The record gives the reactivity of an RNA of 177 nucleotides to 2A3 and DMS.
It was measured as part of the RMDB library M2PK90.
The DMS profile rests on 1,433 reads.
RNA sequence: GGGAACGACUCGAGUAGAGUCGAAAACGUCUUAAAUUAAAUUUCCCUUGCUGAGCUCAUCUCAGCUAACAAUAACAAAUAACAAAUAAGAACAGCAGGGAAGGUUGUUCUUAUUUGUUACAAUUAACUGUACGUUAUAGUUCGCUAUAACGUACAGAAAAGAAACAACAACAACAAC
Reactivity to 2A3 in 0.01 (KOAc 150mM, MgCl2 10mM, bicine 150mM(pH8.5), 24C), signal-to-noise 7, nucleotides 027 to 126: c030g070u040c070u140u220a150a170a170u110u140a110a090a130u050u130u020c000c000c000u000u050g000c010u010g010a010g000c100u100c230a300u200c150u000c000a010g000c010u010a050a010c020a020a120u210a080a030c040a070a120a030u050a010a020c000a000a010a010u010a010a000g000a000a010c010a010g030c010a010g100g110g130a070a050g090g010u010u010g000u000u010c000u010u010a000u000u000u000g000u000u010a000c000a010a040u080u080a040a070
Reactivity to DMS in 0.01 (KOAc 150mM, MgCl2 10mM, bicine 150mM(pH8.5), 24C), signal-to-noise 2, nucleotides 027 to 126: c180g000u010c160u000u000a090a050a120u010u010a040a100a180u010u000u000c000c010c000u000u000g020c000u000g030a000g000c300u010c300a150u010c000u000c000a020g010c000u000a030a060c110a060a080u030a030a090c120a040a080a130u010a000a030c000a000a030a000u000a010a000g000a020a010c000a000g000c010a030g010g010g020a140a110g000g000u000u000g000u000u000c000u000u000a000u000u000u000g000u000u000a010c120a120a070u000u000a050a200